Chemical mapping of a 177-nucleotide RNA with DMS.
[RMDB]
RNA sequence: GGGAACGACUCGAGUAGAGUCGAAAAGAUAUGGAGACCACAGAGCGAGGAUCACGUGUAUCGGAAACGAUACCGUGGGAGCUCGUGGUCUCCUAAGUCAAAAGGAUAGACCUUCGGGUCUAUCCAACGUGUACUAUUGGUUCGCCAAUAGUACACGAAAAGAAACAACAACAACAAC
Reactivity to DMS in 0.01 (KOAc 150mM, MgCl2 10mM, bicine 150mM(pH8.5), 24C), signal-to-noise 3, nucleotides 027 to 126: g000a010u000a030u010g000g000a010g000a000c000c000a020c000a070g020a020g030c010g000a080g010g010a020u010c000a010c010g000u020g020u000a010u000c000g030g000a010a000a030c000g020a010u000a000c000c000g010u000g010g010g000a000g040c000u000c000g010u000g000g000u000c000u010c000c000u000a000a030g000u000c010a140a080a170a160g000g000a010u000a010g010a010c000c000u000u020c260g020g020g010u000c000u000a000u000c000c010a020a030

The DMS profile rests on 7,164 reads. Conditions: 150 mM KOAc, 10 mM MgCl2 and 150 mM bicine (pH 8.5), 24 C. Source: RMDB library TTRDES, as collected in RNAgym.